[RMDB]
RNA sequence: GGGAACGACUCGAGUAGAGUCGAAAAAGUAAUCAAUUCUUAUAGUGGAAAUGCCACCACUCAAAACAAGGCCGGUUCGGUUGAUUCGUCCAUGAGGACGAGGAUAAGGGUAGAACGUCUUACUAGCCACCACAGAAUGUUUCGACAUUCUGUGGUGAAAAGAAACAACAACAACAAC
Reactivity to DMS in 0.01 (KOAc 150mM, MgCl2 10mM, bicine 150mM(pH8.5), 24C), signal-to-noise 3, nucleotides 027 to 126: a080g010u010a100a050u040c100a040a140u010u000c020u010u010a070u060a020g020u000g000g010a120a120a080u020g020c040c050a120c010c000a010c020u000c230a050a050a030a050c110a050a070g000g010c010c090g000g010u020u010c040g020g000u000u000g000a250u030u000c000g010u000c010c030a130u020g010a190g020g000a000c020g000a020g000g000a100u010a040a080g000g000g030u000a080g000a060a070c040g010u000c050u000u000a090c070u000a050g010c240
Reactivity to 2A3 in 0.01 (KOAc 150mM, MgCl2 10mM, bicine 150mM(pH8.5), 24C), signal-to-noise 4, nucleotides 027 to 126: a000g100u090a010a060u110c040a030a110u140u100c060u100u250a230u190a200g000u000g020g040a140a180a070u120g030c010c010a030c000c010a020c010u140c120a070a080a000a030c020a030a070g020g000c010c000g060g020u060u070c030g030g040u010u110g010a050u090u010c010g000u000c030c010a110u260g060a140g060g000a000c010g000a000g010g000a050u060a090a090g090g030g020u030a010g010a060a020c030g020u010c010u020u030a050c020u040a060g110c020
The data come from the RNA Mapping Database (RMDB), libraries RFM100 and RFMREP. This 177-nucleotide RNA was probed chemically with DMS and 2A3. For DMS the reverse transcriptase was MarathonRT. The RNA was probed in 150 mM KOAc, 10 mM MgCl2 and 150 mM bicine (pH 8.5) at 24 C.